[RMDB]
RNA sequence: GGGAACGACUCGAGUAGAGUCGAAAAGAUAUGGAGGUGUCAUGACAUGAUGUUUGUCGGAAACGACAGUCAGCAUCAACAGCAUGCACCUCCUAAGUCAAAACACGGAGACUUCGGUCUCCGUGAAGGCUCAAUCAUACUUCGGUAUGAUUGAGCCAAAAGAAACAACAACAACAAC
Reactivity to 2A3 in 0.01 (KOAc 150mM, MgCl2 10mM, bicine 150mM(pH8.5), 24C), signal-to-noise 1, nucleotides 027 to 126: g020a020u040a030u070g010g010a010g020g040u020g140u300c110a000u000g030a270c060a240u300g020a020u010g120u090u100u050g020u050c020g000g010a060a000a000c030g000a020c010a010g120u240c110a000g010c050a030u060c030a050a200c160a090g020c000a000u000g000c010a010c010c000u000c000c000u010a000a000g000u000c010a020a000a070a060c020a010c000g000g000a000g000a000c020u090u150c300g090g030u000c000u000c020c000g000u000g000a000a040
Reactivity to DMS in 0.01 (KOAc 150mM, MgCl2 10mM, bicine 150mM(pH8.5), 24C), signal-to-noise 1, nucleotides 027 to 126: g020a020u000a240u000g000g010a000g000g000u010g040u000c060a010u000g020a030c090a170u020g020a010u000g000u010u020u000g010u000c000g000g000a070a020a140c000g020a000c000a000g000u010c300a180g030c000a000u000c030a020a090c260a210g000c010a000u000g000c000a030c010c000u000c000c000u010a000a020g000u000c020a080a070a130a300c020a020c000g040g060a040g000a030c000u000u020c300g020g000u000c000u000c000c010g020u000g020a050a010
Notes:
Chemical mapping of a 177-nucleotide RNA with 2A3 and DMS. The RNA was probed in 150 mM KOAc, 10 mM MgCl2 and 150 mM bicine (pH 8.5) at 24 C. DMS adducts were read by reverse transcription with MarathonRT.